This 177-nucleotide RNA was probed chemically with DMS and 2A3. For 2A3 the reverse transcriptase was SuperScript II with manganese. The RNA was probed in 150 mM KOAc, 10 mM MgCl2 and 150 mM bicine (pH 8.5) at 24 C. It was measured as part of the RMDB library OK1LIB.
[RMDB]
RNA sequence: GGGAACGACUCGAGUAGAGUCGAAAAUCCAGCUCACCGGCAUGAUCGCCGCGAGCGCCAUCCAUAGCGGCAGGCUCGGCAGCGAUUGCAGCACUUCGAUGACGCGCUGGACCAGUAGAUCGAAGAACGAGGGUAUAGGCUUCGGCCUAUACCCUCGAAAAGAAACAACAACAACAAC
Reactivity to DMS in 0.01 (KOAc 150mM, MgCl2 10mM, bicine 150mM(pH8.5), 24C), signal-to-noise 1, nucleotides 027 to 126: u000c010c010a160g010c000u010c000a150c060c010g000g040c040a100u000g000a000u000c130g060c010c120g010c000g000a010g050c000g050c040c000a020u040c060c040a030u040a020g090c030g000g010c120a140g020g110c000u000c040g000g000c090a140g000c000g000a080u020u000g000c070a050g000c000a050c000u010u000c060g000a020u000g000a170c150g010c080g000c000u020g050g040a290c050c110a020g000u000a110g000a090u000c020g000a120a000g000a150a190
Reactivity to 2A3 in 0.01 (KOAc 150mM, MgCl2 10mM, bicine 150mM(pH8.5), 24C), signal-to-noise 3, nucleotides 027 to 126: u000c010c000a000g000c030u140c020a090c050c090g090g000c000a000u100g060a020u100c040g000c000c000g000c000g020a000g030c000g000c010c010a150u170c060c040a150u100a190g130c060g010g000c050a070g070g000c000u020c010g200g000c050a010g020c010g080a060u000u090g000c080a090g070c030a090c060u020u000c020g010a010u070g090a050c150g040c000g030c030u080g000g030a010c000c000a030g110u100a010g000a040u060c020g000a020a030g000a060a010